[RMDB]
RNA sequence: GGGAACGACUCGAGUAGAGUCGAAAAACGCGCUCGGCACGAUCGCCGGCAACACGGGCGGCAUCAUCAGCGGCGCCGGCUCGACCGUGUCGGGCCUCGGCACCGUCGUCGGCAGCCAGACGCUGCAGACGGGUAGUAGUUUCGACUACUACCCGUCAAAAGAAACAACAACAACAAC
Reactivity to 2A3 in 0.01 (KOAc 150mM, MgCl2 10mM, bicine 150mM(pH8.5), 24C), signal-to-noise 6, nucleotides 027 to 126: a010c040g040c010g000c020u030c030g010g000c020a010c040g040a040u040c040g000c010c000g010g010c030a020a060c120a040c120g140g100g000c040g040g000c040a060u100c020a020u020c040a130g040c030g090g000c020g010c000c010g000g000c040u070c090g020a020c030c050g020u020g000u050c000g000g000g000c000c000u010c020g010g000c030a040c080c030g100u100c040g020u020c020g060g000c000a000g030c010c010a060g030a090c070g000c020u030g000c010a060
Reactivity to DMS in 0.01 (KOAc 150mM, MgCl2 10mM, bicine 150mM(pH8.5), 24C), signal-to-noise 9, nucleotides 027 to 126: a090c100g010c300g000c020u000c010g020g010c020a050c050g010a050u000c070g000c010c010g010g000c020a070a120c090a060c090g010g010g010c040g010g010c080a090u000c080a080u000c090a100g010c040g010g010c150g010c000c000g010g000c030u010c080g010a020c020c110g020u010g010u000c000g010g010g000c020c010u000c040g010g010c010a090c050c020g000u000c050g010u010c050g000g010c030a040g010c010c050a150g010a080c110g010c040u000g000c050a120